Source information
Chemical mapping of a 177-nucleotide RNA with 2A3 and DMS. For DMS the reverse transcriptase was MarathonRT. High DMS reactivity at an A or C suggests that its Watson-Crick edge is free. Reactivities are given for positions 27 through 126.
RNA sequence: GGGAACGACUCGAGUAGAGUCGAAAAUCUCAAAGCUUCGGCUUUGAGACAGUAAGGGAAACCGAUUAUUCCGGUCGAGUCCGGAGAAACAAAGUCAAAUAAGAACGUUAGGCUUCGGCCUAACGAAGGCCAAAUAGAUAUUCGUAUCUAUUUGGCCAAAAGAAACAACAACAACAAC
Reactivity to 2A3 in 0.01 (KOAc 150mM, MgCl2 10mM, bicine 150mM(pH8.5), 24C), signal-to-noise 3, nucleotides 027 to 126: u000c000u000c000a000a010a030g010c010u070u140c190g120g000c000u030u000u010g000a000g000a000c020a010g120u120a050a110g060g010g020a060a040a040c030c010g010a010u060u030a230u300u000c030c010g030g020u030c090g090a050g160u090c010c000g020g000a030g050a030a050a010c070a040a080a010g140u210c090a050a100a190u230a130a120g110a210a030c010g000u000u000a000g000g000c000u020u040c250g060g000c000c030u000a000a010c000g010a020a010
Reactivity to DMS in 0.01 (KOAc 150mM, MgCl2 10mM, bicine 150mM(pH8.5), 24C), signal-to-noise 3, nucleotides 027 to 126: u000c010u000c010a000a010a010g010c010u000u010c210g030g020c000u020u000u000g000a010g000a010c060a050g010u000a070a100g010g020g000a070a080a190c030c030g020a130u010u020a170u010u000c000c000g010g010u000c120g020a180g020u000c000c000g000g000a010g000a080a050a080c180a080a070a070g010u000c070a110a110a080u000a070a100g010a090a160c000g000u000u000a000g010g020c000u010u010c180g030g020c000c000u000a000a010c000g010a040a060
For DMS, 3,354 sequencing reads were counted.